[RMDB]
RNA sequence: GGGAACGACUCGAGUAGAGUCGAAAAGGAUGCAGCUGGCUGCAGAUUCCAGCCAAUCACCUGGUGUGACCUCUUGUUUCAACUGAGGGGCAUACUGCCUUCAUACUGACAAAGAUUAGUGACCAGUUCCCCAGCCAGCAGUCCACCAGUGAAAAACCUAAUACUCAGUUUUCGAACUGAGUAUUAGAAAAGAAACAACAACAACAAC
Reactivity to DMS in 0.01 (KOAc 150mM, MgCl2 10mM, bicine 150mM(pH8.5), 24C), signal-to-noise 3, nucleotides 027 to 156: g000g030a100u010g000c100a140g020c000u000g020g060c020u000g020c020a140g000a190u000u000c050c020a110g000c030c020a130a140u000c030a090c070c030u010g000g040u000g000u000g010a070c020c010u000c050u020u020g000u010u000u000c070a110a120c170u000g010a080g020g020g010g010c040a100u000a050c070u010g010c020c020u000u000c020a120u010a150c070u020g000a090c040a050a060a120g000a140u000u000a080g010u010g010a070c050c010a100g030u000u000c010c000c020c030a070g010c010c020a040g030c030a220g000u000c020c000a030c000c020a110g010u010g000a050a040a050a110a110c140
Reactivity to 2A3 in 0.01 (KOAc 150mM, MgCl2 10mM, bicine 150mM(pH8.5), 24C), signal-to-noise 7, nucleotides 027 to 156: g030g010a020u050g030c090a040g000c080u020g010g000c010u020g010c030a050g040a150u140u040c050c020a020g040c040c020a020a090u090c020a040c050c050u040g000g000u020g070u090g140a250c020c010u020c030u050u060g070u080u270u140c100a110a070c060u090g010a030g010g020g020g000c010a050u090a130c030u100g050c010c010u070u080c030a070u080a160c050u070g060a040c050a070a210a050g050a210u110u140a050g040u050g090a080c040c060a030g010u020u030c010c020c000c010a010g010c000c000a000g000c010a000g000u000c000c000a010c010c000a010g010u060g140a090a030a010a000a010c020